[RMDB]
RNA sequence: GGGAACGACUCGAGUAGAGUCGAAAACCAUGGGUGGAAGAUGGUUGUGUGUGAUAAGGUACGUUCUCUCAAAUUGAGUGAUAAUAAUUGUUAUCUUAAUGCAGUUAUUAUGACACUUGAUUUAUUGGCAGUCUAAUCUUCGGAUUAGACAAAAGAAACAACAACAACAAC
Reactivity to DMS in 0.01 (KOAc 150mM, MgCl2 10mM, bicine 150mM(pH8.5), 24C), signal-to-noise 6, nucleotides 027 to 129: c040c030a130u050g000g020g010u000g020g020a070a050g030a020u010g020g020u020u010g010u000g020u000g020u030g030a080u020a070a060g000g000u030a160c090g020u040u010c040u020c000u000c140a050a040a020u030u000g020a030g000u020g010a040u000a000a010u000a000a000u000u000g030u010u040a010u000c290u070u060a130a100u020g020c000a050g030u000u000a000u000u000a000u000g030a180c040a020c020u000u000g010a020u000u000u000a100u020u000g000g040c140a140
Reactivity to 2A3 in 0.01 (KOAc 150mM, MgCl2 10mM, bicine 150mM(pH8.5), 24C), signal-to-noise 9, nucleotides 027 to 129: c010c000a060u070g030g000g010u030g010g020a040a030g030a050u060g030g030u070u060g040u030g040u000g020u020g060a080u060a140a050g040g010u040a030c020g010u050u010c020u000c000u020c080a010a010a020u010u010g000a000g000u010g010a000u000a010a000u000a000a000u000u000g030u020u090a150u160c140u130u240a140a080u230g000c000a000g000u000u000a000u000u010a010u040g070a040c000a000c000u000u010g010a000u010u010u060a160u070u100g100g030c050a030
Background:
Chemical mapping of a 170-nucleotide RNA with DMS and 2A3. For 2A3, 26,976 sequencing reads were counted. The DMS profile rests on 57,442 reads. The RNA was probed in 150 mM KOAc, 10 mM MgCl2 and 150 mM bicine (pH 8.5) at 24 C.